[RMDB]
RNA sequence: GGGAACGACUCGAGUAGAGUCGAAAACGUAACCUCUUACGACGGGGACGCAAACGAAGAGACAUUACCUGGAGAAGAACGGGCGUCCAACCACGAGUCAGUAACCGAGGAAAGUCGUAGGGCACGAAAAUAUAAAUUUAUUCGUAAAUUUAUAUUUAAAAGAAACAACAACAACAAC
Reactivity to 2A3 in 0.01 (KOAc 150mM, MgCl2 10mM, bicine 150mM(pH8.5), 24C), signal-to-noise 7, nucleotides 027 to 126: c040g030u040a030a070c010c010u030c020u060u050a020c030g020a010c030g040g000g000g130a020c010g000c020a100a180a080c050g090a120a060g060a020g050a070c030a130u120u210a130c030c060u100g080g050a150g020a200a040g030a120a020c010g010g040g000c010g000u010c000c000a010a020c020c010a030c020g050a050g050u060c050a050g060u130a060a020c030c030g010a040g030g010a160a040a010g020u000c010g000u020a020g010g020g000c050a010c060g070a090
Reactivity to DMS in 0.01 (KOAc 150mM, MgCl2 10mM, bicine 150mM(pH8.5), 24C), signal-to-noise 6, nucleotides 027 to 126: c070g000u020a130a110c080c030u000c020u020u020a020c050g000a050c040g010g010g000g000a020c020g010c030a060a090a130c050g000a190a070g000a150g010a130c130a080u040u030a090c110c100u000g010g010a090g000a130a080g000a070a110c110g010g000g010c010g010u000c010c020a120a120c030c040a120c010g010a080g010u010c080a090g000u040a130a100c050c020g000a080g000g000a110a100a100g000u000c010g000u000a040g010g010g000c170a030c080g010a070
Source information: The record gives the reactivity of an RNA of 177 nucleotides to 2A3 and DMS. Conditions: 150 mM KOAc, 10 mM MgCl2 and 150 mM bicine (pH 8.5), 24 C. For DMS the reverse transcriptase was MarathonRT. The 2A3 profile rests on 6,251 reads.